[RMDB]
RNA sequence: GGGAACGACUCGAGUAGAGUCGAAAAUCACGCCAGUUCGCUGGCGUGAAAAGGUCAAGACAAAAGUCUUAAGCCAAAAGGGAAAACCCAGACCAAUGGCAAAAAGCGGUACCUUCGGGUACCGCAACUAUCGAACUAGGUUCGCCUAGUUCGAUAGAAAAGAAACAACAACAACAAC
Reactivity to 2A3 in 0.01 (KOAc 150mM, MgCl2 10mM, bicine 150mM(pH8.5), 24C), signal-to-noise 3, nucleotides 027 to 126: u010c010a000c010g000c000c000a000g000u050u050c170g020c110u010g000g000c020g000u010g000a000a020a000a000g030g030u160c060a010a000g010a010c030a040a300a030a110g010u000c010u070u060a110a040g000c000c010a000a030a020a060g000g010g030a060a110a040a050c010c000c000a010g050a010c000c000a020a070u030g010g000c010a020a040a000a110a000g000c010g000g000u010a000c000c040u060u100c250g090g010g000u010a000c000c000g000c000a000a000
Reactivity to DMS in 0.01 (KOAc 150mM, MgCl2 10mM, bicine 150mM(pH8.5), 24C), signal-to-noise 3, nucleotides 027 to 126: u000c000a010c010g000c010c000a000g040u000u020c300g040c000u000g000g020c000g010u000g010a020a010a080a050g000g020u010c140a070a020g000a000c000a080a070a140a140g000u000c010u000u000a170a190g000c010c000a000a020a140a150g000g000g000a160a030a150a140c000c010c010a070g000a130c010c010a040a300u000g010g020c010a070a100a060a040a140g010c030g000g010u000a000c010c000u000u010c140g000g000g000u000a000c000c000g000c000a000a020